Source: RMDB library M2RFPK, as collected in RNAgym. An RNA of 207 nucleotides, treated with DMS and 2A3 and read out base by base. The RNA was probed in 150 mM KOAc, 10 mM MgCl2 and 150 mM bicine (pH 8.5) at 24 C. For 2A3, 3,970 sequencing reads were counted. For 2A3 the reverse transcriptase was SuperScript II with manganese.
RNA sequence: GGGAACGACUCGAGUAGAGUCGAAAAGUAGUUAUGCUGAAAAUCGUUGAGGUUGUAUGGAAUAGGUUAACCGUAAGACCUUAAGUUGAAAAACUUUAAAAUUAAUCUCAGGUAAACUACUUUGAGUAAAACCUUCGUCGUUUCGACGACGAAGGAACGUACAACUAAUGUUCGCAUUAGUUGUACGAAAAGAAACAACAACAACAAC
Reactivity to DMS in 0.01 (KOAc 150mM, MgCl2 10mM, bicine 150mM(pH8.5), 24C), signal-to-noise 2, nucleotides 027 to 156: g070u000a010g000u010u010a020u020g080c010u020g020a050a110a060a080u010c060g020u030u020g010a020g020g000u000u010g030u000a040u010g030g020a120a210u000a110g050g000u000u010a080a190c020c040g000u000a050a070g000a050c010c030u000u000a000a030g010u000u000g010a150a130a220a070a020c020u000u000u000a070a040a060a100u000u020a050a080u050c100u000c010a110g050g000u000a020a020a030c000u000a000c000u000u000u010g010a240g000u000a070a030a050a080c010c000u000u000c000g020u010c000g040u000u000u000c300g050a080c030g000a000c000g000a020a010g010g020a000a020
Reactivity to 2A3 in 0.01 (KOAc 150mM, MgCl2 10mM, bicine 150mM(pH8.5), 24C), signal-to-noise 5, nucleotides 027 to 156: g000u010a000g000u030u020a110u300g050c020u030g030a050a010a070a130u140c110g050u060u090g020a020g010g010u030u020g040u080a050u100g040g060a110a110u090a190g140g030u150u150a090a040c030c000g020u030a060a030g020a010c000c000u000u010a010a020g010u050u010g050a080a080a010a010a020c030u140u160u160a110a120a070a080u090u100a110a160u040c040u010c080a010g000g020u090a010a060a000c000u000a000c000u020u010u050g010a010g010u090a010a090a040a040c000c000u000u000c000g000u000c000g000u000u000u120c160g060a020c000g000a000c000g000a000a000g000g000a000a000